[RMDB]
RNA sequence: GGGAACGACUCGAGUAGAGUCGAAAAGAUAUGGACUCGCUACAAAGAGCUUGGAUUUAUGGGUCUAAGUGGGUCGGAAACGACCCAUAUGACCCAUUGUCAGCUCAAAAAGGCGAGUCCUAAGUCACUCAAAUCAAUUCUUCGGAAUUGAUUUGAGAAAAGAAACAACAACAACAAC
Reactivity to DMS in 0.01 (KOAc 150mM, MgCl2 10mM, bicine 150mM(pH8.5), 24C), signal-to-noise 2, nucleotides 027 to 126: g030a030u010a300u010g000g000a040c010u010c000g000c010u000a080c130a120a230a150g000a010g000c020u000u010g020g010a010u000u000u000a010u000g010g000g010u000c000u010a110a240g000u000g010g000g010u010c000g000g040a130a130a230c020g020a010c000c030c000a000u000a230u010g000a000c010c020c000a000u000u000g000u020c000a040g000c010u000c000a040a070a070a190a120g010g020c000g000a020g020u000c010c000u000a000a080g000u000c030a220
Reactivity to 2A3 in 0.01 (KOAc 150mM, MgCl2 10mM, bicine 150mM(pH8.5), 24C), signal-to-noise 2, nucleotides 027 to 126: g040a040u080a070u160g000g010a000c000u030c020g000c030u090a080c090a090a280a060g010a000g000c040u080u200g090g000a010u100u300u180a040u080g000g050g000u060c020u010a300a040g090u030g020g010g020u010c010g020g050a060a140a010c010g010a000c040c000c010a010u020a010u020g000a000c020c000c000a000u000u000g000u000c000a000g000c000u010c000a050a110a040a010a020g040g010c020g000a000g000u000c000c000u010a000a000g000u010c010a040